[RMDB]
An RNA of 207 nucleotides, treated with DMS and 2A3 and read out base by base. DMS adducts were read by reverse transcription with MarathonRT.
RNA sequence: GGGAACGACUCGAGUAGAGUCGAAAAGAACAUUUGAGACUACCCCAUCCCAUAUCUUCGUACUUCAUUACUUAAUUUACGUAGGUAGAUUUAGUGCGGAAGGUAACGAACAGGGUACAGCGUGAGGCCGGUUAACGGAGCAACGAAAACCUGUCUAUCACGCUUUAUACUUCGGUAUAAAGCGUGAAAAAGAAACAACAACAACAAC
Reactivity to DMS in 0.01 (KOAc 150mM, MgCl2 10mM, bicine 150mM(pH8.5), 24C), signal-to-noise 2, nucleotides 027 to 156: g020a060a070c090a180u020u000u020g000a130g000a100c060u000a220c010c020c000c020a250u020c010c000c060a270u000a010u000c050u000u020c020g020u010a050c010u000u000c090a100u000u000a040c030u010u010a030a050u000u010u000a050c170g020u000a060g010g000u000a010g040a040u010u010u000a000g020u010g030c040g020g060a040a030g020g020u000a020a140c030g040a060a070c050a020g020g020g030u000a090c060a030g030c010g000u010g010a150g000g010c000c030g000g000u010u000a120a190c060g020g030a070g000c030a110a100c040g000a090a070a050a070c000c000u000g000u000c000u000a250
Reactivity to 2A3 in 0.01 (KOAc 150mM, MgCl2 10mM, bicine 150mM(pH8.5), 24C), signal-to-noise 3, nucleotides 027 to 156: g020a040a020c060a070u060u110u230g100a060g000a030c030u070a050c060c000c000c030a040u040c050c000c000a010u020a080u120c070u030u010c000g020u020a010c000u020u020c020a050u030u040a010c020u040u050a060a060u190u090u040a080c090g080u070a090g140g050u010a020g040a100u040u010u050a000g000u010g040c080g060g020a020a010g020g000u050a090a040c050g000a010a000c020a060g010g000g020u130a050c050a040g060c050g010u060g020a040g050g040c010c020g000g000u090u070a090a040c000g000g040a050g070c010a010a040c030g010a050a020a000a040c000c000u000g020u010c020u040a090
Conditions: 150 mM KOAc, 10 mM MgCl2 and 150 mM bicine (pH 8.5), 24 C. The data come from the RNA Mapping Database (RMDB), library ARCHII.